[RMDB]
RNA sequence: GGGAACGACUCGAGUAGAGUCGAAAAACUUUUAGCGAUAAUCGUUAUAGAAAUGUCCUUGGCAUAUCGCUAUGCACAGAGGUAUUAGUAGCGCAAUAGCUAUUGAAGGACAUUACCUCUCAAAUAAGGAUAAACGUUGUUUCGACAACGUUUAUCCAAAAGAAACAACAACAACAAC
Reactivity to 2A3 in 0.01 (KOAc 150mM, MgCl2 10mM, bicine 150mM(pH8.5), 24C), signal-to-noise 2, nucleotides 027 to 126: a030c030u230u050u010u110a000g040c000g010a020u150a120a050u120c050g040u070u010a110u070a160g100a050a040a010u020g010u020c010c030u080u060g070g050c000a050u020a000u110c030g030c040u010a040u080g100c080a060c050a140g070a020g090g020u140a090u030u130a080g020u020a000g000c020g000c030a100a170u060a170g020c020u030a000u030u110g030a030a010g000g010a010c000a030u000u010a020c000c010u010c000u030c030a040a060a110u160a160a050
Reactivity to DMS in 0.01 (KOAc 150mM, MgCl2 10mM, bicine 150mM(pH8.5), 24C), signal-to-noise 2, nucleotides 027 to 126: a050c100u010u000u000u000a010g000c040g010a020u000a010a230u000c060g020u010u010a090u000a220g000a030a070a010u000g000u000c000c000u000u000g010g000c010a050u010a000u000c030g020c010u000a010u000g040c070a090c190a020g000a020g010g020u000a020u000u000a070g010u010a010g000c010g020c200a120a080u000a130g030c000u000a020u000u000g010a070a030g000g000a040c120a020u000u000a000c030c000u000c040u000c210a050a090a120u000a090a110
This 177-nucleotide RNA was probed chemically with 2A3 and DMS. Values cover nucleotides 27 to 126. Source: RMDB library M2PK90, as collected in RNAgym. The reactions ran in a buffer of 150 mM KOAc, 10 mM MgCl2 and 150 mM bicine (pH 8.5), at 24 C. For 2A3 the reverse transcriptase was SuperScript II with manganese.